[RMDB]
RNA sequence: GGGAACGACUCGAGUAGAGUCGAAAACUAUUUGGCAAGCUUCAUGUUCUUGACGAGACCCAAAAGAGAGUUCAUGUCAACAAACUCACCUCGCUCAACGGAUUCAACCGUCUUUGAAAUGGUGCUGUGACGAUCCUCCCUUCGGGGAGGAUCGUCAAAAAGAAACAACAACAACAAC
Reactivity to 2A3 in 0.01 (KOAc 150mM, MgCl2 10mM, bicine 150mM(pH8.5), 24C), signal-to-noise 1, nucleotides 027 to 126: c000u000a210u250u090u060g110g000c010a070a070g000c090u000u000c030a050u070g100u180u050c010u050u130g020a050c030g000a010g000a000c000c010c000a000a030a160a000g260a000g000a000g000u000u080c170a240u230g040u150c020a040a040c020a040a170a060c120u000c000a000c000c000u090c070g010c000u000c000a000a000c000g000g000a050u000u280c020a000a260c070c030g040u000c000u000u050u040g020a040a000a000u210g020g030u000g020c000u020g000
This 177-nucleotide RNA was probed chemically with 2A3. For 2A3 the reverse transcriptase was SuperScript II with manganese. The data come from the RNA Mapping Database (RMDB), library OK1LIB.